Description:
An RNA of 177 nucleotides, treated with DMS and 2A3 and read out base by base. Source: RMDB library OK1LIB, as collected in RNAgym. Values are in units of 0.01, from 0 to 300, in steps of 10. Values cover nucleotides 27 to 126. The 2A3 profile rests on 2,387 reads. The RNA was probed in 150 mM KOAc, 10 mM MgCl2 and 150 mM bicine (pH 8.5) at 24 C. For 2A3 the reverse transcriptase was SuperScript II with manganese. DMS adducts were read by reverse transcription with MarathonRT.
[RMDB]
RNA sequence: GGGAACGACUCGAGUAGAGUCGAAAAGGAGAGGGCCCCAAGGGUGGCGUAGGGCAUGCAGGAGGGCAUCUUGCAGAGGUGGCGCUUGCCGAGGUGGAACACUCAGGCGUCGAACUGGCAGAUGUGAACCUCCAGUAGCAUUCGUGCUACUGGAGGUAAAAGAAACAACAACAACAAC
Reactivity to DMS in 0.01 (KOAc 150mM, MgCl2 10mM, bicine 150mM(pH8.5), 24C), signal-to-noise 3, nucleotides 027 to 126: g000g000a080g000a100g010g030g000c050c040c010c100a100a120g020g000g040u020g000g010c080g010u010a120g000g000g050c060a090u030g020c080a050g050g020a080g000g020g020c050a000u000c000u010u050g000c000a040g000a100g020g030u020g010g000c010g020c020u010u000g010c220c090g010a010g020g000u000g060g030a120a120c100a100c000u020c000a010g010g000c030g000u010c060g030a140a260c030u000g010g020c030a020g000a060u020g010u000g020a050
Reactivity to 2A3 in 0.01 (KOAc 150mM, MgCl2 10mM, bicine 150mM(pH8.5), 24C), signal-to-noise 3, nucleotides 027 to 126: g070g010a110g020a060g010g060g010c000c010c000c020a030a060g100g030g040u140g040g050c080g040u070a040g030g020g040c040a030u070g010c020a020g020g040a040g000g040g000c020a010u010c010u090u100g020c020a030g030a070g110g030u040g000g000c010g000c060u060u030g050c030c040g020a050g030g060u200g060g110a100a040c080a010c070u010c000a000g000g000c000g010u050c010g020a080a040c020u020g010g060c010a010g000a050u050g050u030g060a030